[RMDB]
RNA sequence: GGGAACGACUCGAGUAGAGUCGAAAAGGCUUUGCGGCGGUUGUUCGAGCCCUUCUGCUUGCGGGCCAUUUGCCGCUGGUAGCGGGCGAGGUUGCGGGCCUUGCGGUCCAGAUGCUUCGGGUUGGCGAAUAUGUCUACGGUUCGCCGUAGACAUAUUAAAAGAAACAACAACAACAAC
Reactivity to 2A3 in 0.01 (KOAc 150mM, MgCl2 10mM, bicine 150mM(pH8.5), 24C), signal-to-noise 4, nucleotides 027 to 126: g030g010c060u070u090u120g030c020g030g020c010g040g000u030u030g060u050u070c020g000a000g010c000c000c000u030u140c000u040g050c000u010u070g030c050g010g030g050c020c020a150u190u170u280g030c000c010g030c020u010g040g030u050a010g010c040g020g000g000c000g010a030g010g050u080u060g030c040g020g010g000c000c000u040u130g060c120g010g000u000c000c000a040g020a210u100g020c010u000u040c030g040g020g000u000u050g070g000c060g040
Reactivity to DMS in 0.01 (KOAc 150mM, MgCl2 10mM, bicine 150mM(pH8.5), 24C), signal-to-noise 7, nucleotides 027 to 126: g010g000c010u000u000u020g030c010g010g020c080g010g020u030u000g010u020u010c050g000a190g000c020c020c010u010u040c020u010g000c030u000u020g000c050g010g020g030c090c150a140u010u060u030g020c010c020g010c010u010g000g020u000a040g030c300g010g000g000c020g010a080g000g030u000u010g010c260g010g000g010c010c000u000u030g020c090g000g000u000c020c040a080g010a100u010g010c030u000u000c030g000g000g010u000u000g000g010c140g010
Chemical mapping of a 177-nucleotide RNA with 2A3 and DMS. Values cover nucleotides 27 to 126.